Annotation:
Chemical mapping of a 177-nucleotide RNA with DMS and 2A3. For 2A3, 1,985 sequencing reads were counted. It was measured as part of the RMDB library OK2TST. For DMS, 2,320 sequencing reads were counted. For DMS the reverse transcriptase was MarathonRT. The reactions ran in a buffer of 150 mM KOAc, 10 mM MgCl2 and 150 mM bicine (pH 8.5), at 24 C.

RNA sequence: GGGAACGACUCGAGUAGAGUCGAAAAUUUUUCAUCCACUAAACCUGUUACUGAAUCCUCUGGAUCAGCCCUGCUUGAUAUGGUUACAAAACCGUGAUAGGCAAGAUUUAGUAAAAACCUGGGCGGAAGUACGAGUAUGAUUCGUCAUACUCGUACUAAAAGAAACAACAACAACAAC
Reactivity to DMS in 0.01 (KOAc 150mM, MgCl2 10mM, bicine 150mM(pH8.5), 24C), signal-to-noise 3, nucleotides 027 to 126: u000u010u010u010u000c030a070u010c030c020a060c040u000a050a110a100c060c030u000g000u000u000a070c020u010g000a060a050u000c000c040u010c140u010g000g010a100u000c070a100g000c050c060c050u000g000c000u000u000g020a120u000a020u010g010g010u010u010a110c300a120a070a070a030c000c010g020u000g000a120u000a040g000g010c040a070a050g000a070u000u020u010a020g010u000a010a060a050a090a080c100c030u000g000g010g020c060g010g000a070
Reactivity to 2A3 in 0.01 (KOAc 150mM, MgCl2 10mM, bicine 150mM(pH8.5), 24C), signal-to-noise 2, nucleotides 027 to 126: u040u020u010u050u100c010a010u020c010c010a040c080u090a050a070a090c020c050u090g050u120u060a050c020u030g060a030a030u000c010c030u080c100u090g040g080a060u020c050a040g000c020c010c010u010g040c000u000u030g040a010u050a020u240g040g050u030u040a150c090a080a210a020a010c010c000g010u030g050a080u050a050g030g000c030a010a020g000a020u000u060u030a030g000u040a000a030a070a050a080c000c020u030g000g000g030c000g050g000a030